[RMDB]
RNA sequence: GGGAACGACUCGAGUAGAGUCGAAAAAGCCGCUACGGCGGCACUAAGUGAUGAAAACAUAUUUUACACAGACCUGUACUGAACUUUGUCAUGCAGAUAAACGAUAUUGCCUUUUUUUUCUGAUUAAGAUGAACUCCAUCUUCGGAUGGAGUUCAUCAAAAGAAACAACAACAACAAC
Reactivity to 2A3 in 0.01 (KOAc 150mM, MgCl2 10mM, bicine 150mM(pH8.5), 24C), signal-to-noise 1, nucleotides 027 to 126: a000g010c000c000g000c020u010a010c300g060g000c010g000g170c000a000c110u060a090a090g020u000g070a280u000g060a010a080a140a000c050a090u300a120u150u110u040u080a000c000a000c000a000g100a070c000c020u000g050u110a020c100u040g070a120a000c000u000u100u220g020u120c010a020u020g050c040a000g000a060u120a100a120a000c010g010a050u060a110u020u120g050c050c100u080u000u000u000u000u000u100u000c050u060g030a050u100u200a130a000
The record gives the reactivity of an RNA of 177 nucleotides to 2A3.
It was measured as part of the RMDB library RFM100.
The reactions ran in a buffer of 150 mM KOAc, 10 mM MgCl2 and 150 mM bicine (pH 8.5), at 24 C.